[RMDB]
RNA sequence: GGGAACGACUCGAGUAGAGUCGAAAAAUCAGCCUUCGUUCUGUAACCGGGGUUGGAUCCGACUCUCAUAGGCUCUCCAACCCAACUCCUACUCAAUACGUCCUCGUCGUACAGAACGGUAACAUGUAAAACGAAGGCUGCUUCGGCAGCCUUCGAACAGUGUAUGUCUGUUCGCAGACAUACACUGAAAAGAAACAACAACAACAAC
Reactivity to DMS in 0.01 (KOAc 150mM, MgCl2 10mM, bicine 150mM(pH8.5), 24C), signal-to-noise 1, nucleotides 027 to 156: a060u010c090a100g000c010c030u010u010c040g020u010u010c000u000g000u000a080a080c070c060g010g010g020g010u010u020g000g000a060u000c090c020g000a110c000u000c060u020c150a120u000a070g000g020c020u010c080u000c020c010a000a050c030c000c000a070a000c010u020c020c020u000a080c040u000c010a080a110u000a100c110g000u000c020c010u000c050g050u000c050g000u000a030c040a040g000a020a020c040g000g010u000a100a060c050a110u010g000u010a060a070a150a180c020g020a030a020g000g020c000u000g000c000u000u020c290g000g010c000a000g000c010c010u000u000c000g030a000a050
Reactivity to 2A3 in 0.01 (KOAc 150mM, MgCl2 10mM, bicine 150mM(pH8.5), 24C), signal-to-noise 3, nucleotides 027 to 156: a010u080c030a030g040c000c000u050u030c010g000u000u000c000u030g020u020a060a080c010c070g000g000g000g000u020u010g010g020a050u300c010c000g100a120c050u060c010u040c130a190u120a180g000g010c010u000c000u020c020c000a010a000c000c000c000a000a010c000u000c000c020u050a040c010u030c080a070a060u070a190c050g080u110c000c030u070c040g080u030c020g000u020a020c000a010g010a010a010c040g000g020u050a070a010c070a090u170g090u300a110a060a000a000c010g000a000a000g000g000c000u000g010c000u000u010c060g100g010c010a020g000c000c000u000u000c000g000a000a000
An RNA of 207 nucleotides, treated with DMS and 2A3 and read out base by base. The data come from the RNA Mapping Database (RMDB), library M2RFPK. DMS adducts were read by reverse transcription with MarathonRT. The 2A3 profile rests on 1,896 reads. Conditions: 150 mM KOAc, 10 mM MgCl2 and 150 mM bicine (pH 8.5), 24 C.